[RMDB]
Structure probing data (DMS and 2A3) for a 177-nucleotide construct.
RNA sequence: GGGAACGACUCGAGUAGAGUCGAAAACCACUGGAAGCGAGUCUUGCAUGGGUCUUGGCGACAAGAUUUGUGAAGCGUAGACAGCGGGUACAAAAGCCGCGUUAUUGAGCCCCGAAAAAUUCAUAUUCUGUAAACAAACUUUCGAGUUUGUUUACAGAAAAGAAACAACAACAACAAC
Reactivity to DMS in 0.01 (KOAc 150mM, MgCl2 10mM, bicine 150mM(pH8.5), 24C), signal-to-noise 1, nucleotides 027 to 126: c000c000a090c150u030g000g010a030a260g000c000g000a100g000u000c020u000u000g010c010a000u000g000g000g000u000c010u000u000g000g000c260g000a110c050a000a040g010a000u000u010u000g040u010g010a080a100g030c140g000u010a010g010a060c080a120g000c000g060g020g000u040a060c130a070a080a170a070g030c030c030g000c020g020u000u000a070u010u000g010a150g000c020c000c000c000g000a040a040a040a050a110u020u070c000a080u000a230u000u000
Reactivity to 2A3 in 0.01 (KOAc 150mM, MgCl2 10mM, bicine 150mM(pH8.5), 24C), signal-to-noise 4, nucleotides 027 to 126: c010c020a010c050u050g060g070a070a040g040c030g020a030g030u010c020u040u050g030c010a040u030g030g000g000u000c000u020u020g040g010c030g010a020c010a010a000g010a020u010u030u040g030u010g040a090a030g070c020g020u020a020g010a030c020a020g000c020g010g010g030u160a150c060a070a150a020a010g030c020c010g020c020g020u050u040a080u060u100g040a030g030c000c000c020c020g130a120a020a000a050a050u120u070c040a030u080a140u250u020
DMS adducts were read by reverse transcription with MarathonRT.